RNA sequence: GGGAACGACUCGAGUAGAGUCGAAAACAGGAAACUGGUUAAUCGUUUUCCUUGGUAGUAUAGCGGAAACCAUAAAUAAGAAGAACUCUAAGUGCUUGAGUAGAGUUAAAAUAAUUAGACUGGCAAUUAAGGUACUCCACGUUCGCGUGGAGUACAACCAUCACGUUCACUUCGGUGAACGUGAUGGAAAAGAAACAACAACAACAAC
Reactivity to 2A3 in 0.01 (KOAc 150mM, MgCl2 10mM, bicine 150mM(pH8.5), 24C), signal-to-noise 2, nucleotides 027 to 156: c030a010g000g170a040a030a070c100u210g060g020u150u090a050a130u170c010g000u010u030u050u040c010c000u010u040g090g000u020a030g030u030a040u170a160g020c040g010g000a070a020a000c000c000a030u110a170a150a040u110a090a040g060a030a050g030a060a030c000u000c000u000a030a040g110u090g300c010u050u030g030a000g010u040a000g000a010g000u120u160a010a010a010a010u070a000a000u190u000a000g020a030c000u010g000g020c000a010a060u180u020a140a000g070g000u000a010c000u030c010c000a010c010g010u010u030c220g020c010g130u000g010g010a030g000u000a000c000a000a000

The record gives the reactivity of an RNA of 207 nucleotides to 2A3. It was measured as part of the RMDB library M2RFPK. Conditions: 150 mM KOAc, 10 mM MgCl2 and 150 mM bicine (pH 8.5), 24 C. Values cover nucleotides 27 to 156. For 2A3 the reverse transcriptase was SuperScript II with manganese.